An RNA of 207 nucleotides, treated with 2A3 and read out base by base. Source: RMDB library M2RFPK, as collected in RNAgym. High 2A3 reactivity points to a flexible backbone, as in loops and unpaired stretches. Conditions: 150 mM KOAc, 10 mM MgCl2 and 150 mM bicine (pH 8.5), 24 C.

[RMDB]
RNA sequence: GGGAACGACUCGAGUAGAGUCGAAAACAUUACGAAUUCAGUCGCAAAUUGUAGAAUUAGCUACUCUACGAUUUAGUGAGCGUUAGUAACGCUGUAAUAUAAUAUAGUCUUUGGAAGGAUUAUAUUGGAGCCGCGGACAAGUUCGCUUGUCCGCGAAGCUAUACCCGUGCUUCGGCACGGGUAUAGCAAAAGAAACAACAACAACAAC
Reactivity to 2A3 in 0.01 (KOAc 150mM, MgCl2 10mM, bicine 150mM(pH8.5), 24C), signal-to-noise 2, nucleotides 027 to 156: c020a030u080u230a010c030g050a080a160u150u120c080a070g190u080c030g000c040a000a000a010u000u010g000u010a000g000a030a040u060u010a020g020c010u030a030c000u000c010u000a000c000g000a000u010u010u100a010g020u000g040a040g020c000g010u010u100a040g040u060a050a040c000g000c000u000g030u100a070a090u090a070u010a040a000u010a000u010a000g020u010c030u090u160u110g090g080a120a070g010g000a020u000u010a000u000a000u040u030g060g000a040g090c060c010g000c030g000g000a000c010a000a000g010u050u100c180g040c130u000u000g000u000c000c020g020c000g000a020a000